[RMDB]
An RNA of 177 nucleotides, treated with DMS and read out base by base. The data come from the RNA Mapping Database (RMDB), library RFMREP. Conditions: 150 mM KOAc, 10 mM MgCl2 and 150 mM bicine (pH 8.5), 24 C. Values cover nucleotides 27 to 126.

RNA sequence: GGGAACGACUCGAGUAGAGUCGAAAAUUCUCUGUAAUAACGUCGUUUUGCAAAACUGCAAUGGUCCUGAGCCGAUAAGCCUCUAAUGAAAUUAUAGACUCAUCGGCUCAGGACCAUUGCGGUUGUGGCUGUAGAAAAUGUUCGCAUUUUCUACAGCAAAAGAAACAACAACAACAAC
Reactivity to DMS in 0.01 (KOAc 150mM, MgCl2 10mM, bicine 150mM(pH8.5), 24C), signal-to-noise 1, nucleotides 027 to 126: u010u000c000u000c000u000g010u010a200a070u000a070a080c130g020u000c080g000u000u000u000u000g040c110a060a090a020a020c010u000g010c010a020a000u000g010g010u010c000c000u010g010a010g010c000c000g000a010u000a040a030g010c010c000u000c040u000a000a030u010g010a120a060a300u000u000a020u000a000g000a000c000u000c010a020u000c000g000g020c000u000c000a010g000g000a000c000c000a000u000u000g000c010g000g000u000u000g000u020g050